[RMDB]
About this RNA
This 207-nucleotide RNA was probed chemically with 2A3 and DMS. 2A3 is a SHAPE reagent: it acylates the 2'-hydroxyl of flexible nucleotides of all four kinds. For DMS the reverse transcriptase was MarathonRT. The RNA was probed in 150 mM KOAc, 10 mM MgCl2 and 150 mM bicine (pH 8.5) at 24 C.
RNA sequence: GGGAACGACUCGAGUAGAGUCGAAAAAAUGCACAAAGGAUAGCCAAAAUUAGCGUUGCGAUGAUUUUGGCGAAAUUCUUAGCAAAUCGUCCAAUCCAUCCUGACUGUCGGUUCGGUGCGGAUUAAAGCCAUAGACAGAAUCUAAGCAUGUAGAUUCCUCUAAUAGCGAGUUCGCUCGCUAUUAGAGAAAAGAAACAACAACAACAAC
Reactivity to 2A3 in 0.01 (KOAc 150mM, MgCl2 10mM, bicine 150mM(pH8.5), 24C), signal-to-noise 2, nucleotides 027 to 156: a000a000u150g010c080a080c130a060a050a000g030g000a020u030a040g000c000c010a010a010a010a000u010u000a030g090c050g100u060u070g020c060g030a040u040g020a010u040u000u020u000g010g010c000g030a000a020a020u070u000c030u060u100a010g020c020a000a000a120u110c040g020u000c000c000a010a010u000c000c000a010u000c000c000u030g080a080c030u050g070u050c030g010g030u020u060c060g000g000u000g000c000g000g000a020u040u050a020a000a000g030c030c010a020u040a020g050a020c020a030g000a010a010u000c000u040a050a060g110c070a130u070g020u060a010g030a120u060u030c000
Reactivity to DMS in 0.01 (KOAc 150mM, MgCl2 10mM, bicine 150mM(pH8.5), 24C), signal-to-noise 1, nucleotides 027 to 156: a060a070u000g000c040a090c110a120a110a040g000g000a060u000a190g000c010c010a000a110a020a020u000u000a060g030c000g020u010u000g090c070g000a130u000g000a000u000u000u000u010g000g010c030g010a100a060a050u000u000c040u000u000a100g000c010a090a110a070u000c070g040u000c060c050a050a190u000c010c020a070u000c050c040u020g010a060c040u000g030u030c060g030g010u000u000c100g020g050u010g020c180g000g010a140u000u000a070a060a070g000c040c080a100u000a070g010a060c080a060g000a040a300u000c000u000a050a140g010c060a080u000g010u000a080g000a220u010u000c010